RNA sequence: GGGAACGACUCGAGUAGAGUCGAAAAGAUAUGGAUACAAAGAGCGAUAAGAAGUGCUCGGAAACGAGCAUACUUCUUUUGACGCUCAAAAAGUCCUAAGUCAAACCACUGGGUUCGCCCAGUGGAACUUCUUUCAUCAGUUCGCUGAUGAAAGAAGAAAAGAAACAACAACAACAAC
Reactivity to 2A3 in 0.01 (KOAc 150mM, MgCl2 10mM, bicine 150mM(pH8.5), 24C), signal-to-noise 2, nucleotides 027 to 126: g010a010u080a000u210g010g000a030u070a240c130a100a230a090g000a010g010c040g040a080u030a240a020g000a000a000g000u010g000c020u000c020g000g020a030a020a020c000g000a000g000c010a000u070a070c010u000u040c000u010u030u010u080g080a030c000g020c010u000c010a060a010a000a010a000g030u020c010c020u040a110a050g030u020c050a080a000a180c000c000a010c000u010g080g000g000u040u100c300g160c030c000c000a000g000u000g010g000a000a000
Reactivity to DMS in 0.01 (KOAc 150mM, MgCl2 10mM, bicine 150mM(pH8.5), 24C), signal-to-noise 2, nucleotides 027 to 126: g010a040u000a280u030g020g000a010u000a060c160a120a170a140g010a000g030c010g020a110u000a000a000g000a010a010g000u000g000c000u000c000g010g010a050a050a180c010g000a030g000c000a050u020a040c010u000u000c000u000u000u000u020g000a150c050g030c000u000c000a000a030a100a140a130g000u000c000c000u000a080a170g010u000c020a090a140a300c000c000a000c000u000g010g000g000u000u010c230g010c020c000c010a000g000u000g000g000a010a060
Notes: This 177-nucleotide RNA was probed chemically with 2A3 and DMS. The RNA was probed in 150 mM KOAc, 10 mM MgCl2 and 150 mM bicine (pH 8.5) at 24 C. The DMS profile rests on 1,782 reads. Values cover nucleotides 27 to 126. 2A3 adducts were read by reverse transcription with SuperScript II with manganese. Source: RMDB library TTRDEL, as collected in RNAgym.